Source information: This 177-nucleotide RNA was probed chemically with 2A3 and DMS. For 2A3, 8,225 sequencing reads were counted. The RNA was probed in 150 mM KOAc, 10 mM MgCl2 and 150 mM bicine (pH 8.5) at 24 C. The DMS profile rests on 7,332 reads. Reactivities are rounded to 0.1 and cut off at 0 and 3.

[RMDB]
RNA sequence: GGGAACGACUCGAGUAGAGUCGAAAAAUAAGAUUUGCUCAUAUUUCUUAUGGCUUAUAUAUGGGAGAACAUUUGCCUAAAGGUAACAUCGUCAUAAAUACAAAAGAUGGCGGUAAAUAUACAUUAGCGAUCAUAAGUAGUUCGCUACUUAUGAUCGAAAAGAAACAACAACAACAAC
Reactivity to 2A3 in 0.01 (KOAc 150mM, MgCl2 10mM, bicine 150mM(pH8.5), 24C), signal-to-noise 8, nucleotides 027 to 126: a010u100a030a050g090a110u070u090u150g040c030u060c090a050u040a060u110u190u000c060u100u120a120u190g040g000c040u180u040a060u010a010u010a020u210g020g010g030a070g030a050a020c040a100u070u060u100g040c020c010u100a130a070a030g060g020u040a060a020c010a070u020c000g040u000c020a000u040a050a160a020u220a260c140a030a040a020a050g140a020u010g010g000c000g000g000u010a010a070a000u170a010u040a030c110a120u060u140a040g070
Reactivity to DMS in 0.01 (KOAc 150mM, MgCl2 10mM, bicine 150mM(pH8.5), 24C), signal-to-noise 4, nucleotides 027 to 126: a030u030a050a050g000a140u000u010u010g010c040u040c060a050u010a010u020u010u030c030u050u020a100u030g010g000c110u030u000a060u010a050u010a060u010g000g010g010a050g010a050a040c080a110u000u010u000g020c030c020u000a020a080a150g010g000u000a080a130c160a020u000c000g010u000c020a030u000a050a050a090u040a080c300a120a080a100a070g000a010u010g010g010c010g020g000u010a010a050a080u030a070u000a040c110a090u020u010a050g000

For DMS the reverse transcriptase was MarathonRT.